[RMDB]
RNA sequence: GGGAACGACUCGAGUAGAGUCGAAAAGAGGAACGAGAUGUGUGUAUAAGAUGACACAUGCAGCAGCCAAGUGGUUCUGUUCUUAGUCCGUGACUGGGAGACGAAACGUCGUUCGCGGAUUGCCGUCAGUCACGGCCUACUUCGGUAGGCCGUGACUAAAAGAAACAACAACAACAAC
Reactivity to 2A3 in 0.01 (KOAc 150mM, MgCl2 10mM, bicine 150mM(pH8.5), 24C), signal-to-noise 2, nucleotides 027 to 126: g070a000g040g010a000a040c030g020a020g000a160u030g030u000g020u000g040u060a090u120a130a300g140a280u220g040a050c000a000c000a000u030g030c000a070g000c000a010g010c000c000a200a060g150u100g110g000u150u010c120u100g000u060u040c020u060u070a050g000u000c030c030g000u000g010a060c100u130g000g050g090a070g000a000c020g050a300a160a000c070g100u040c010g090u070u100c020g000c000g000g000a040u000u060g060c000c010g010u030c060
Reactivity to DMS in 0.01 (KOAc 150mM, MgCl2 10mM, bicine 150mM(pH8.5), 24C), signal-to-noise 1, nucleotides 027 to 126: g000a040g000g000a110a170c070g020a050g070a060u000g000u020g000u000g000u000a040u060a000a170g030a060u080g000a030c030a030c010a020u000g010c060a090g020c050a050g010c040c040a000a100g000u050g000g000u000u000c140u030g060u000u000c010u000u020a050g000u000c030c060g000u080g040a080c200u040g030g030g000a160g070a060c070g010a050a020a100c150g000u000c070g000u040u000c000g000c020g000g030a130u040u020g000c060c000g000u000c040